[RMDB]
RNA sequence: GGGAACGACUCGAGUAGAGUCGAAAAGUCGAGCCACGCAUCCGCGCGGCCGAACGUGCACUGCACGAGCUGCCGCUCCUGCUCGAGCGUCAAUGGCUCGAACUGCACGCCGAGAUGCGCGGCGUCACCGCGAUACUGAUUUCGAUCAGUAUCGCGGAAAAGAAACAACAACAACAAC
Reactivity to 2A3 in 0.01 (KOAc 150mM, MgCl2 10mM, bicine 150mM(pH8.5), 24C), signal-to-noise 2, nucleotides 027 to 126: g080u050c020g000a010g000c010c000a010c000g000c000a040u050c030c020g010c000g000c000g070g000c000c010g010a030a020c000g000u010g000c050a080c300u300g010c040a010c020g010a020g000c020u000g000c000c010g000c050u060c020c000u050g060c060u030c040g000a010g000c000g100u140c090a140a210u220g080g010c010u000c000g010a060a040c010u060g010c030a030c080g000c040c050g090a150g030a070u020g000c020g030c010g000g000c000g010u020c010a050
Reactivity to DMS in 0.01 (KOAc 150mM, MgCl2 10mM, bicine 150mM(pH8.5), 24C), signal-to-noise 2, nucleotides 027 to 126: g000u000c060g010a280g010c000c010a030c000g000c000a020u000c020c110g010c120g010c000g000g010c020c080g000a060a030c010g010u000g010c010a210c270u010g020c040a040c030g000a030g000c010u010g000c020c000g020c000u000c110c080u000g000c050u000c070g000a020g000c020g000u010c290a090a160u020g020g000c010u010c010g020a000a060c090u000g000c120a070c110g020c150c040g000a120g000a040u010g010c000g020c020g010g030c040g000u000c100a120